This 207-nucleotide RNA was probed chemically with DMS and 2A3. The reactions ran in a buffer of 150 mM KOAc, 10 mM MgCl2 and 150 mM bicine (pH 8.5), at 24 C. It was measured as part of the RMDB library M2RFOK. For DMS the reverse transcriptase was MarathonRT. Values cover nucleotides 27 to 156.
RNA sequence: GGGAACGACUCGAGUAGAGUCGAAAAAACGUUGCAUGAUCGUAAAACAUGCCCGGCUUACCGUGAGCCGCCUUUGAAAGAAAGGUUUACACGGACUCUGUUGCGUUACGCACGUACCUACCUUGUGAAAACGGCAUCUUGUUCGCAAGAUGCCGAAGAUAUCGAAAUACUUCGGUAUUUCGAUAUCAAAAGAAACAACAACAACAAC
Reactivity to DMS in 0.01 (KOAc 150mM, MgCl2 10mM, bicine 150mM(pH8.5), 24C), signal-to-noise 3, nucleotides 027 to 156: a080a080c020g000u000u010g040c010a030u010g000a080u010c020g000u000a040a050a040a040c010a010u000g020c020c040c010g010g010c020u000u020a140c020c080g030u000g000a060g050c030c010g000c010c020u000u000u000g000a190a100a300g000a100a020a020g020g020u030u000u000a120c020a050c000g000g020a180c130u010c060u010g000u020u000g000c000g020u000u000a100c090g000c050a080c100g010u010a090c040c040u010a100c040c050u010u000g030u020g000a070a070a070a180c000g000g000c010a010u000c000u000u000g020u000u010c300g040c030a030a020g000a010u000g010c010c010g010a000a030
Reactivity to 2A3 in 0.01 (KOAc 150mM, MgCl2 10mM, bicine 150mM(pH8.5), 24C), signal-to-noise 9, nucleotides 027 to 156: a000a000c010g000u000u000g000c000a000u000g010a060u200c040g070u220a060a110a010a000c000a000u000g000c000c000c000g000g010c000u020u070a110c010c010g000u000g010a000g000c000c000g020c000c010u040u010u000g090a090a060a010g040a010a010a000g010g000u020u040u040a030c000a000c000g040g020a060c050u100c060u150g100u110u040g020c020g030u060u060a080c200g010c020a010c020g020u030a040c010c020u050a070c010c040u100u110g070u040g120a040a050a020a040c000g000g010c000a000u000c000u010u020g030u070u070c150g010c120a000a000g000a000u000g000c000c000g000a000a000